[RMDB]
RNA sequence: GGGAACGACUCGAGUAGAGUCGAAAAGAUAUGGACUCUCUACUGACCGAAGAACUCGGAAACGAGGGAGGUCACGUAGAGGAGUCCUAAGUCAAAACGCUUAUGCAAGUUCGCUUGCAUAAGCGAAUCCUAUUUUUAUGUUCGCAUAAAAAUAGGAAAAAGAAACAACAACAACAAC
Reactivity to 2A3 in 0.01 (KOAc 150mM, MgCl2 10mM, bicine 150mM(pH8.5), 24C), signal-to-noise 3, nucleotides 027 to 126: g010a010u080a060u170g000g000a000c000u000c010u000c000u000a000c010u010g010a010c000c010g150a300a040g020a070a030c000u000c020g030g000a080a080a060c010g000a000g010g010g020a020g020g000u000c010a000c110g000u000a000g030a080g030g020a000g000u000c000c000u000a080a030g040u020c030a020a000a090a140c020g000c000u000u000a000u010g000c010a000a020g010u020u130c210g090c220u000u000g000c000a010u000a000a000g010c000g000a000a000
Reactivity to DMS in 0.01 (KOAc 150mM, MgCl2 10mM, bicine 150mM(pH8.5), 24C), signal-to-noise 6, nucleotides 027 to 126: g000a040u000a300u000g010g000a010c000u000c000u010c000u000a010c010u000g000a010c000c000g010a110a150g000a140a180c010u000c010g000g000a090a090a210c010g000a010g000g010g000a050g010g010u000c010a000c240g010u000a000g000a030g010g000a020g010u000c000c000u000a020a070g010u000c040a070a080a140a170c010g000c000u000u000a000u000g000c000a010a010g000u000u020c240g010c000u000u000g000c000a000u000a010a000g020c000g010a010a020
This 177-nucleotide RNA was probed chemically with 2A3 and DMS.
For 2A3, 15,462 sequencing reads were counted.
Source: RMDB library TTRDEL, as collected in RNAgym.
Conditions: 150 mM KOAc, 10 mM MgCl2 and 150 mM bicine (pH 8.5), 24 C.